This 207-nucleotide RNA was probed chemically with 2A3 and DMS. Source: RMDB library OK3TST, as collected in RNAgym. For DMS, 3,291 sequencing reads were counted. The 2A3 profile rests on 3,602 reads. DMS adducts were read by reverse transcription with MarathonRT. The reactions ran in a buffer of 150 mM KOAc, 10 mM MgCl2 and 150 mM bicine (pH 8.5), at 24 C.
[RMDB]
RNA sequence: GGGAACGACUCGAGUAGAGUCGAAAACUCCAGACAGCAAUAUUUACACAGACCUGUUUGCCACUGAGAUACUGCAGGGCGAUUGCUGGGAGAACGUACCUUAUUUUGAUUACAAUUCAUCGCAAACAAGAAAAGUCAAGGGGGUCAUACUCUCCAAAUCAAUCGUUACUUUCGAGUAACGAUUGAUAAAAGAAACAACAACAACAAC
Reactivity to 2A3 in 0.01 (KOAc 150mM, MgCl2 10mM, bicine 150mM(pH8.5), 24C), signal-to-noise 4, nucleotides 027 to 156: c010u000c010c010a060g040a110c010a000g020c010a020a030u040a100u080u250u210a110c130a030c030a060g120a090c020c010u060g050u170u170u120g090c090c030a150c090u110g040a030g040a210u140a140c030u070g000c000a010g000g020g000c020g030a020u020u000g000c010u030g000g000g030a010g000a040a010c040g040u080a040c010c000u070u080a170u070u200u040u070g030a030u030u070a100c090a120a140u070u080c030a040u110c080g030c190a110a160a080c040a080a070g120a080a100a020a000g020u020c020a010a030g030g000g000g020g000u010c010a010u060a100c030u010c000u010c030c000a020a120
Reactivity to DMS in 0.01 (KOAc 150mM, MgCl2 10mM, bicine 150mM(pH8.5), 24C), signal-to-noise 2, nucleotides 027 to 156: c040u010c010c030a190g010a300c040a190g010c000a040a110u010a050u020u010u000a260c150a180c070a110g080a080c020c020u010g040u000u000u010g010c020c030a280c090u010g010a180g000a170u020a020c010u000g020c000a040g010g000g000c010g020a040u000u000g000c030u010g000g020g030a080g060a060a040c080g030u000a070c020c000u000u000a150u000u000u000u000g020a170u000u010a100c070a030a130u000u010c060a120u000c070g020c080a050a070a110c050a080a130g010a050a080a070a070g000u000c060a050a070g010g000g000g010g030u010c100a100u010a050c090u000c000u030c000c010a000a220